[RMDB]
RNA sequence: GGGAACGACUCGAGUAGAGUCGAAAAUAAAAUCGUAGGGCGAGACGAUCGACGUAAAUCGCUCAAACUACUCGAGACCAAAGGAAUUCGCUUCGGUAACUCGCUCUAAUCCCGAGCGAUAAAUGAAAUCUUUGUUGAAGUUCGCUUCAACAAAGAUAAAAGAAACAACAACAACAAC
Reactivity to DMS in 0.01 (KOAc 150mM, MgCl2 10mM, bicine 150mM(pH8.5), 24C), signal-to-noise 2, nucleotides 027 to 126: u020a080a080a090a150u000c010g000u010a040g010g000g000c020g000a010g010a040c030g020a040u000c040g000a030c050g050u000a030a010a080u000c160g000c060u000c130a090a110a220c010u000a030c010u000c010g000a000g000a140c030c100a050a070a070g000g000a140a100u000u010c010g030c030u030u000c140g010g000u000a190a110c040u000c000g010c000u000c000u010a140a230u000c110c000c040g010a050g020c000g010a020u000a050a060a090u000g000a110a120
Reactivity to 2A3 in 0.01 (KOAc 150mM, MgCl2 10mM, bicine 150mM(pH8.5), 24C), signal-to-noise 1, nucleotides 027 to 126: u110a000a060a000a010u020c020g000u000a010g000g010g010c000g020a000g000a010c020g010a060u100c030g020a020c020g050u090a020a040a130u110c050g030c060u030c080a050a020a060c000u020a000c000u000c000g010a030g020a050c020c000a120a040a020g140g020a140a170u040u000c000g000c060u100u030c000g000g000u000a030a020c010u010c000g000c000u000c000u000a050a080u080c000c000c000g010a010g000c000g000a000u050a020a120a070u100g070a120a120
Annotation: An RNA of 177 nucleotides, treated with DMS and 2A3 and read out base by base. For DMS, 967 sequencing reads were counted. For DMS the reverse transcriptase was MarathonRT. Reactivities are given for positions 27 through 126. The reactions ran in a buffer of 150 mM KOAc, 10 mM MgCl2 and 150 mM bicine (pH 8.5), at 24 C.